An RNA of 177 nucleotides, treated with 2A3 and DMS and read out base by base. The 2A3 profile rests on 2,902 reads. Values are in units of 0.01, from 0 to 300, in steps of 10. It was measured as part of the RMDB library TTRDES. Reactivities are given for positions 27 through 126. The reactions ran in a buffer of 150 mM KOAc, 10 mM MgCl2 and 150 mM bicine (pH 8.5), at 24 C.

RNA sequence: GGGAACGACUCGAGUAGAGUCGAAAAGAUAUGGAUCUGAAGAGCGAUAAGAUGGUGUCGGAAACGACACUCAUCUUUUGACGCUCGUAGGAUCCUAAGUCAAAACUUCUGCCUUCGGGCAGAAGAACUUCAGAAAGCAGUUCGCUGCUUUCUGAAGAAAAGAAACAACAACAACAAC
Reactivity to 2A3 in 0.01 (KOAc 150mM, MgCl2 10mM, bicine 150mM(pH8.5), 24C), signal-to-noise 2, nucleotides 027 to 126: g040a000u060a060u150g010g010a010u010c040u080g110a300a100g000a050g000c030g100a130u050a300a020g000a010u000g000g030u000g000u000c010g020g030a070a050a050c010g000a000c000a000c020u060c000a020u010c000u020u020u040u090g090a050c030g000c000u000c010g000u010a000g000g010a000u000c000c000u000a010a010g030u030c030a010a010a170a240c000u010u010c010u000g010c000c000u050u030c300g180g000g000c010a010g000a000a010g000a010a010
Reactivity to DMS in 0.01 (KOAc 150mM, MgCl2 10mM, bicine 150mM(pH8.5), 24C), signal-to-noise 3, nucleotides 027 to 126: g000a070u000a300u000g000g010a000u000c000u020g000a230a300g000a010g040c000g030a170u010a020a000g000a010u000g000g010u000g010u010c000g010g000a070a040a140c000g020a020c000a010c000u010c010a010u000c000u000u000u010u000g020a180c080g020c010u000c000g000u010a250g020g000a010u010c000c000u000a040a030g020u000c040a060a070a140a170c010u000u000c000u000g010c000c000u000u010c240g020g020g030c010a000g000a000a000g000a070a130